[RMDB]
RNA sequence: GGGAACGACUCGAGUAGAGUCGAAAAGAAAGAAAAGAAAGAAAAUCAGAGCCCAAAUAAACCGAGAUAACCUCAUCUCAUCGGUGGAGAUGAAAAGGACGCAUACGUCCAAAGGGCUCUGAAAGAACAUAGUAAAUAUCUUCGGAUAUUUACUAUGAAAAGAAACAACAACAACAAC
Reactivity to 2A3 in 0.01 (KOAc 150mM, MgCl2 10mM, bicine 150mM(pH8.5), 24C), signal-to-noise 8, nucleotides 027 to 126: g030a020a050a020g090a040a110a020a010g120a040a120a010g060a040a120a010a020u010c000a000g000a000g000c000c000c020a030a100a020u110a040a050a010c040c040g050a030g020a150u110a100a090c010c030u040c020a040u010c010u000c020a170u110c060g120g040u120g050g010a040g000a020u060g010a030a020a030a070g000g000a000c000g030c060a070u160a300c070g000u000c010c000a000a030a030g000g000g000c000u000c000u000g000a000a000a000g010a020a000
Reactivity to DMS in 0.01 (KOAc 150mM, MgCl2 10mM, bicine 150mM(pH8.5), 24C), signal-to-noise 8, nucleotides 027 to 126: g010a100a100a120g000a100a070a110a130g010a130a110a110g010a080a090a100a090u010c000a000g010a010g000c010c000c000a070a050a070u040a070a120a050c060c040g010a050g000a060u020a070a110c130c090u010c070a050u010c030u000c060a100u020c090g000g010u000g000g010a070g000a070u010g000a030a040a090a160g010g000a020c020g020c300a100u040a080c080g010u000c000c010a030a090a100g000g010g000c000u000c010u000g000a000a020a050g020a070a110
Chemical mapping of a 177-nucleotide RNA with 2A3 and DMS.
The 2A3 profile rests on 15,949 reads.
The reactions ran in a buffer of 150 mM KOAc, 10 mM MgCl2 and 150 mM bicine (pH 8.5), at 24 C.